Annotation
This 177-nucleotide RNA was probed chemically with 2A3 and DMS. As a SHAPE reagent, 2A3 marks flexible, mostly unpaired nucleotides at the ribose 2'-OH. The RNA was probed in 150 mM KOAc, 10 mM MgCl2 and 150 mM bicine (pH 8.5) at 24 C. Source: RMDB library OK2TST, as collected in RNAgym. The 2A3 profile rests on 4,104 reads.
RNA sequence: GGGAACGACUCGAGUAGAGUCGAAAACUCAUACUGGGGCUUUCUGCCCCAGGACCACACCUUCCUGUCCUCUCUGCUCUUAUGGUGCCGGAGGCUGCAGUGACCCAGGGGCCCCCAGGAAUGGGGACUAUUUAUCUUACUUCGGUAAGAUAAAUAGAAAAGAAACAACAACAACAAC
Reactivity to 2A3 in 0.01 (KOAc 150mM, MgCl2 10mM, bicine 150mM(pH8.5), 24C), signal-to-noise 4, nucleotides 027 to 126: c010u010c010a040u120a140c010u000g000g010g010g040c040u120u300u210c150u300g000c040c030c020c000a010g010g000a010c030c030a010c000a020c030c030u060u100c010c020u040g080u130c000c000u020c010u000c010u030g020c000u020c020u090u150a120u300g100g020u030g030c020c010g040g030a010g020g000c010u040g010c000a040g000u010g080a060c010c010c020a030g040g000g040g040c010c010c000c000c000a000g020g020a090a030u030g000g000g000g000a010
Reactivity to DMS in 0.01 (KOAc 150mM, MgCl2 10mM, bicine 150mM(pH8.5), 24C), signal-to-noise 5, nucleotides 027 to 126: c020u000c030a090u010a140c020u000g000g000g020g010c180u000u010u010c260u010g010c010c000c000c010a000g000g000a080c100c070a050c070a090c090c060u010u010c070c020u010g020u000c020c010u000c020u000c060u000g010c030u010c030u010u010a100u010g010g010u000g020c020c220g000g000a070g010g020c100u000g010c100a060g000u000g000a080c050c010c030a100g020g020g000g000c110c000c010c000c010a020g010g020a090a040u000g010g010g010g000a170